[RMDB]
An RNA of 207 nucleotides, treated with 2A3 and DMS and read out base by base.
The RNA was probed in 150 mM KOAc, 10 mM MgCl2 and 150 mM bicine (pH 8.5) at 24 C.
For DMS the reverse transcriptase was MarathonRT.
RNA sequence: GGGAACGACUCGAGUAGAGUCGAAAACGAUCUGUUCGCAGAUCGAGCUACGGAGACGUAGCAAAGCGAGCGAGGGCACGGGCGCUCGCACUACCGGAACUCAAACCAUAUCCACGUGUGCUAGGAUAUGGCCGUGCCCAUAGUACCAGCACACGAACCAUAUAGGUGAUUUCGAUCACCUAUAUGGAAAAGAAACAACAACAACAAC
Reactivity to 2A3 in 0.01 (KOAc 150mM, MgCl2 10mM, bicine 150mM(pH8.5), 24C), signal-to-noise 9, nucleotides 027 to 156: c010g000a000u000c000u010g050u100u090c250g000c090a000g000a010u000c010g010a030g000c000u000a000c000g020g030a080g020a060c010g000u010a000g000c020a030a070a010g000c000g000a000g000c000g000a030g020g010g000c000a000c000g020g010g000c010g010c010u000c010g030c020a010c010u090a070c000c040g120g100a140a070c050u080c160a120a110a140c060c040a110u100a090u210c100c070a110c070g010u010g000u000g000c010u030a110g020g010a030u010a010u020g010g000c000c000g000u000g000c010c000c000a020u040a010g030u040a140c000c030a000g000c000a000c000a000c010g000a030a030
Reactivity to DMS in 0.01 (KOAc 150mM, MgCl2 10mM, bicine 150mM(pH8.5), 24C), signal-to-noise 3, nucleotides 027 to 156: c020g010a010u000c000u010g020u000u010c280g000c020a030g000a030u000c000g030a120g010c010u000a020c000g020g010a300g000a300c080g010u000a020g020c020a050a020a090g020c010g000a010g030c020g010a130g030g010g000c070a050c030g000g040g030c020g000c020u000c040g030c000a020c050u000a300c000c020g000g000a060a090c070u000c020a030a070a070c010c000a040u000a050u000c000c040a090c010g020u010g040u000g010c010u010a090g020g000a070u000a020u010g000g020c000c070g010u000g010c040c000c020a050u000a070g030u000a090c030c030a060g010c010a030c010a020c000g030a080a120